Chemical mapping of a 170-nucleotide RNA with DMS and 2A3.
For DMS the reverse transcriptase was MarathonRT.
Reactivities are given for positions 27 through 129.

[RMDB]
RNA sequence: GGGAACGACUCGAGUAGAGUCGAAAAAUGAGCUUUGCGUGAAUCUUAAUUUACCCGCAAAUGUCCCAUACUCUCGUGUUAUUUCCAGGAUGGGCUUUAAACUCGAUGCAACAGUUCCUGGAUAUCCAAACCGUGACCUUCGGGUCACGGAAAAGAAACAACAACAACAAC
Reactivity to DMS in 0.01 (KOAc 150mM, MgCl2 10mM, bicine 150mM(pH8.5), 24C), signal-to-noise 3, nucleotides 027 to 129: a000u010g000a150g020c120u070u000u000g040c010g000u030g020a130a160u020c240u000u080a040a060u000u040u070a090c040c100c010g000c030a050a000a030u010g020u080c000c030c000a090u010a160c090u000c010u050c040g040u050g060u030u000a120u000u010u170c010c030a030g050g000a050u020g000g000g000c000u020u060u070a160a030a190c030u000c060g000a160u080g030c130a000a000c110a080g020u010u000c000c000u000g040g000a030u030a010u030c020c120a180a120a050
Reactivity to 2A3 in 0.01 (KOAc 150mM, MgCl2 10mM, bicine 150mM(pH8.5), 24C), signal-to-noise 3, nucleotides 027 to 129: a000u080g020a020g000c020u000u000u000g000c030g000u160g100a100a080u090c070u070u300a030a050u130u150u190a120c040c000c000g000c000a000a000a010u030g110u100c000c000c000a020u120a070c030u040c010u030c040g050u040g000u180u260a100u050u160u000c000c000a060g030g000a040u020g000g000g180c050u060u090u010a100a080a020c030u070c080g040a090u100g040c050a070a130c030a140g020u050u000c010c000u020g000g030a070u000a010u090c050c000a070a000a130